[RMDB]
RNA sequence: GGGAACGACUCGAGUAGAGUCGAAAAAAAACCGGGAUGUAAUUGCUGUUAAUCAGUGCUUAUUGAAUGUGUUUCAUAGCAUUUUCUUCAGCAUGUUCCAUUGCAGAGCUCAUGUGUGAGGCACAUAUUUUCAGUGCUUUGCUCCCUUACACUGAUGGGCAUAAUAAUAGUUCGCUAUUAUUAUGCCAAAAGAAACAACAACAACAAC
Reactivity to 2A3 in 0.01 (KOAc 150mM, MgCl2 10mM, bicine 150mM(pH8.5), 24C), signal-to-noise 7, nucleotides 027 to 156: a000a000a000a020c080c020g000g020g000a080u150g030u090a040a060u100u050g000c010u010g010u070u080a040a030u090c050a030g040u010g030c020u070u160a100u150u190g030a050a020u050g030u030g020u080u090u100c090a070u110a060g010c000a010u030u030u020u020c030u050u030c020a010g000c000a010u030g040u090u010c060c050a080u080u200g020c050a020g020a030g060c010u010c040a020u030g020u010g020u020g040a030g010g030c020a000c000a010u100a090u030u060u030u040c020a010g000u020g080c000u020u020u020g010c000u020c000c000c000u030u050a070c070a030c060u080g030a100u190g090
Reactivity to DMS in 0.01 (KOAc 150mM, MgCl2 10mM, bicine 150mM(pH8.5), 24C), signal-to-noise 4, nucleotides 027 to 156: a050a010a060a050c000c040g040g010g020a070u010g020u000a110a060u000u000g020c000u000g010u000u000a110a080u000c050a060g020u010g020c030u000u000a100u010u010g020a070a020u010g020u000g010u000u000u010c060a100u000a100g050c030a050u000u000u000u000c030u000u000c040a100g020c010a040u000g010u010u000c080c040a140u010u000g020c040a270g020a080g020c030u000c060a040u000g040u000g030u000g020a060g020g000c040a030c020a060u000a060u000u000u010u000c070a070g020u000g010c060u000u000u000g010c090u000c030c010c020u000u000a080c020a040c030u010g010a030u010g020